[RMDB]
The record gives the reactivity of an RNA of 177 nucleotides to DMS and 2A3.
Values are in units of 0.01, from 0 to 300, in steps of 10.
2A3 adducts were read by reverse transcription with SuperScript II with manganese.
The DMS profile rests on 1,070 reads.

RNA sequence: GGGAACGACUCGAGUAGAGUCGAAAAAGGAGCUGCCAGCACUAAGCCGGACGGCGCCCUCGCACCAGUUCCGCUGUGGGUUCGCCUACAAGAACGUACGGUGUUGAGGCCCUGUCCGCCGCUGCGCGACCUCAUUGUCGUUCGCGACAAUGAGGUCAAAAGAAACAACAACAACAAC
Reactivity to DMS in 0.01 (KOAc 150mM, MgCl2 10mM, bicine 150mM(pH8.5), 24C), signal-to-noise 2, nucleotides 027 to 126: a050g010g000a190g070c070u000g020c020c000a040g000c020a090c040u000a050a100g050c190c010g020g000a040c000g020g010c250g020c140c030c000u000c000g000c000a000c020c000a240g000u000u000c000c000g010c070u020g000u000g000g030g010u010u010c240g030c000c000u000a010c000a050a050g000a080a020c000g000u010a080c290g000g010u010g010u000u020g020a020g010g020c080c150c000u000g010u000c020c000g010c020c280g050c000u000g020c110g000c020
Reactivity to 2A3 in 0.01 (KOAc 150mM, MgCl2 10mM, bicine 150mM(pH8.5), 24C), signal-to-noise 1, nucleotides 027 to 126: a000g190g020a050g020c050u050g020c080c000a020g010c000a040c100u150a030a010g080c030c020g020g000a010c000g000g070c080g010c050c020c000u000c000g000c000a000c020c000a030g010u010u020c010c000g050c030u000g040u010g010g000g000u000u060c200g070c060c010u010a010c010a010a110g000a000a000c020g010u090a010c120g000g000u010g000u100u300g010a010g020g040c000c000c010u000g010u000c000c000g000c000c010g000c010u030g000c020g000c010